[RMDB]
RNA sequence: GGGAACGACUCGAGUAGAGUCGAAAAAGACGUCAGCCAGAUGACAGUAGAUCAGCACCUGCUGGCCGCCCAUUGCGACGCCAAAGGUAAAAUGUGGAGCAAUUUACGUCUGUUCCGCGACGGCGAACCAUUUAUCACGAUUCGUCGUGAUAAAUGGAAAAGAAACAACAACAACAAC
Reactivity to DMS in 0.01 (KOAc 150mM, MgCl2 10mM, bicine 150mM(pH8.5), 24C), signal-to-noise 6, nucleotides 027 to 126: a060g010a100c180g010u000c040a040g000c090c080a050g010a090u000g020a090c060a130g030u010a080g020a120u010c120a100g010c050a040c090c010u000g000c030u000g000g000c030c050g010c020c020c030a130u010u010g010c090g000a130c050g010c010c040a040a110a090g000g010u010a050a050a060a060u010g020u000g000g010a080g010c050a030a050u000u000u010a080c190g010u000c060u010g000u000u000c000c020g030c080g020a070c100g000g000c020g010a090a220
Reactivity to 2A3 in 0.01 (KOAc 150mM, MgCl2 10mM, bicine 150mM(pH8.5), 24C), signal-to-noise 7, nucleotides 027 to 126: a010g030a020c080g010u010c000a010g020c080c020a010g030a060u040g030a100c040a040g180u170a050g050a230u100c040a020g060c030a030c020c010u020g010c010u010g000g000c010c000g020c010c000c000a050u050u230g090c070g040a060c020g000c010c010a120a100a040g150g010u140a130a140a050a070u200g020u030g000g010a000g010c010a020a040u100u090u150a100c080g060u020c040u040g010u010u030c010c020g000c010g010a030c060g020g000c000g010a040a020